[RMDB]
RNA sequence: GGGAACGACUCGAGUAGAGUCGAAAAGAAGAGUGCAAGAGCAUAAGAUAGGCUGACAGUGUCCUACACAACGAGGGACGCUGACGCGAAAGCGUGGUCUAGCGAACCAAUUAGGCUGCUUGAUGCGCGGUUGAAUUCACUUCGGUGAAUUCAACCGAAAAGAAACAACAACAACAAC
Reactivity to DMS in 0.01 (KOAc 150mM, MgCl2 10mM, bicine 150mM(pH8.5), 24C), signal-to-noise 2, nucleotides 027 to 126: g000a060a100g020a050g020u000g060c060a120a200g010a040g000c020a040u000a120a070g040a160u000a040g000g030c010u010g000a130c000a000g010u040g010u000c000c070u000a170c120a170c300a200a070c290g000a300g000g000g020a070c040g000c000u000g000a030c020g010c000g000a200a060a130g000c000g010u000g000g000u000c040u020a080g030c100g000a110a150c090c020a100a070u000u130a090g020g000c140u050g020c040u030u000g000a090u020g000c030g000
Reactivity to 2A3 in 0.01 (KOAc 150mM, MgCl2 10mM, bicine 150mM(pH8.5), 24C), signal-to-noise 3, nucleotides 027 to 126: g060a050a000g040a000g060u090g000c030a030a020g010a010g010c020a030u050a080a060g050a110u080a070g100g000c010u030g030a020c010a010g000u000g000u000c000c020u130a040c100a010c030a060a300c080g040a160g040g010g010a000c000g020c000u000g020a010c000g010c000g030a170a000a000g030c020g030u060g010g000u020c010u040a010g040c010g080a040a020c020c030a010a020u130u080a070g050g000c050u030g010c010u060u040g050a040u090g060c070g010

Structure probing data (DMS and 2A3) for a 177-nucleotide construct. The 2A3 profile rests on 1,417 reads. The RNA was probed in 150 mM KOAc, 10 mM MgCl2 and 150 mM bicine (pH 8.5) at 24 C. For DMS, 1,601 sequencing reads were counted.